[RMDB]
RNA sequence: GGGAACGACUCGAGUAGAGUCGAAAAGAGCAGAUUUCGAUCUGCUCAAAAAGAUAUGGACUCGGAGAGAGCGAUAAGAUUCAUGUCGGAAACGACAUGUCGAUCUUUUGACGCUCUCCCGAGUCCUAAGUCAAAAAGCACAACUUCGGUUGUGCAAGUCAAGACAUAAGUUCGCUUAUGUCUUGACAAAAGAAACAACAACAACAAC
Reactivity to DMS in 0.01 (KOAc 150mM, MgCl2 10mM, bicine 150mM(pH8.5), 24C), signal-to-noise 2, nucleotides 027 to 156: g020a020g010c000a000g010a020u000u000u000c210g020a040u020c000u000g040c000u020c000a000a020a090a180a110g000a120u000a200u000g000g000a040c010u000c000g000g010a300g010a020g040a020g060c000g040a210u000a030a030g000a030u000u010c040a010u000g020u000c000g010g020a140a060a230c000g030a010c000a000u000g000u000c060g030a020u000c000u000u000u000u000g020a300c070g020c020u000c000u000c000c020c000g000a000g000u000c000c000u000a000a040g010u020c050a040a090a080a180a150g000c000a000c000a000a010c010u010u000c300g040g030u000u000g020u000g000c020a000a020
Reactivity to 2A3 in 0.01 (KOAc 150mM, MgCl2 10mM, bicine 150mM(pH8.5), 24C), signal-to-noise 4, nucleotides 027 to 156: g010a000g000c000a000g010a030u060u080u260c220g070a050u040c010u000g010c000u020c000a010a010a000a000a000g000a010u010a000u040g000g000a000c000u000c020g040g000a250g010a000g000a020g100c070g080a040u090a240a010g010a000u030u040c000a000u000g000u000c010g010g010a040a030a050c010g010a010c000a000u010g000u040c040g000a020u000c000u010u070u040u160g140a090c210g000c000u000c000u000c000c000c000g000a000g000u000c000c000u000a000a000g000u000c000a020a030a010a150a010g000c010a000c010a020a010c010u090u140c220g170g000u010u010g000u000g000c000a000a000
Overview:
The record gives the reactivity of an RNA of 207 nucleotides to DMS and 2A3. For 2A3 the reverse transcriptase was SuperScript II with manganese.